An RNA of 207 nucleotides, treated with DMS and 2A3 and read out base by base.
Source: RMDB library RNAMAK, as collected in RNAgym.
For 2A3 the reverse transcriptase was SuperScript II with manganese.
RNA sequence: GGGAACGACUCGAGUAGAGUCGAAAAGAUAUGGAUGAGUUGUCAGAAUGAUGGGACGUUUGACGUACUGUCGGAAACGACAGUACCGAGUCCUGCAUCAUUCUUGGAUUUACUCAUCCUAAGUCAAAAGAAAGUAUACCUUCGGGUAUACUUUCAAGUCAUUAGUACAGUUCGCUGUACUAAUGACAAAAGAAACAACAACAACAAC
Reactivity to DMS in 0.01 (KOAc 150mM, MgCl2 10mM, bicine 150mM(pH8.5), 24C), signal-to-noise 2, nucleotides 027 to 156: g000a070u000a230u020g010g000a000u000g020a010g070u000u000g000u070c010a060g000a060a030u020g000a020u000g020g010g000a030c000g000u000u010u010g020a160c150g000u010a010c010u000g030u020c010g030g000a160a080a290c010g000a010c000a020g010u000a000c000c000g000a140g010u000c000c010u000g060c080a030u000c000a050u000u010c000u000u000g030g010a060u000u000u000a030c030u020c020a020u000c020c000u010a030a100g000u010c050a100a100a120a220g010a020a000a020g020u000a000u000a000c000c000u000u010c300g030g000g040u000a000u000a000c000u000u000u000c000a040a150
Reactivity to 2A3 in 0.01 (KOAc 150mM, MgCl2 10mM, bicine 150mM(pH8.5), 24C), signal-to-noise 6, nucleotides 027 to 156: g020a020u100a020u140g000g000a000u000g000a000g010u010u020g040u040c010a000g000a010a000u000g000a000u020g010g020g020a010c080g070u120u200u290g080a050c030g000u000a000c000u000g000u000c010g020g020a070a050a010c010g000a000c000a010g000u010a010c010c010g010a010g000u000c000c010u050g070c010a000u000c000a010u000u000c000u010u070g020g000a010u150u140u100a000c000u000c000a000u000c000c000u000a010a020g020u020c030a030a010a030a160g010a000a000a010g000u000a000u010a000c010c020u030u110c270g070g000g000u000a000u000a000c000u000u000u000c000a000a000